[RMDB]
RNA sequence: GGGAACGACUCGAGUAGAGUCGAAAAAAAAAGAGCGUACAUCUCUCUCAGACUGUACGACAGUCUCACUCUCUCGUACGCUUGUUCAACGAGAGAGAGAGAGCGUUGGAACAAGUGUGAAAAAAAACGAUACUAGAAUGUUCGCAUUCUAGUAUCGAAAAGAAACAACAACAACAAC
Reactivity to 2A3 in 0.01 (KOAc 150mM, MgCl2 10mM, bicine 150mM(pH8.5), 24C), signal-to-noise 1, nucleotides 027 to 126: a000a000a000a000a000g100a010g010c020g050u070a060c030a190u070c000u000c010u000c000u020c010a010g000a050c030u010g010u050a050c040g050a020c030a030g090u000c000u000c010a050c000u040c000u010c000u000c010g020u050a090c070g090c170u070u130g070u130u100c030a010a010c040g000a000g020a010g000a010g020a000g000a000g000a000g050c010g030u090u050g060g000a100a030c030a120a140g010u050g040u070g180a000a090a000a000a000a060a000a040
Reactivity to DMS in 0.01 (KOAc 150mM, MgCl2 10mM, bicine 150mM(pH8.5), 24C), signal-to-noise 3, nucleotides 027 to 126: a060a020a080a100a060g000a050g020c100g000u000a090c080a140u000c020u000c030u000c070u010c040a120g000a030c060u010g010u000a060c060g010a050c060a030g000u020c010u000c020a060c020u000c000u000c000u000c010g000u000a080c120g020c120u010u000g020u000u000c060a090a020c020g000a010g000a030g000a020g000a040g010a020g000a000g000c100g040u000u000g010g000a050a030c060a020a040g010u000g000u000g000a010a020a020a050a030a060a050a130
The data come from the RNA Mapping Database (RMDB), library M2PK90. Structure probing data (2A3 and DMS) for a 177-nucleotide construct. The reactions ran in a buffer of 150 mM KOAc, 10 mM MgCl2 and 150 mM bicine (pH 8.5), at 24 C. Values cover nucleotides 27 to 126.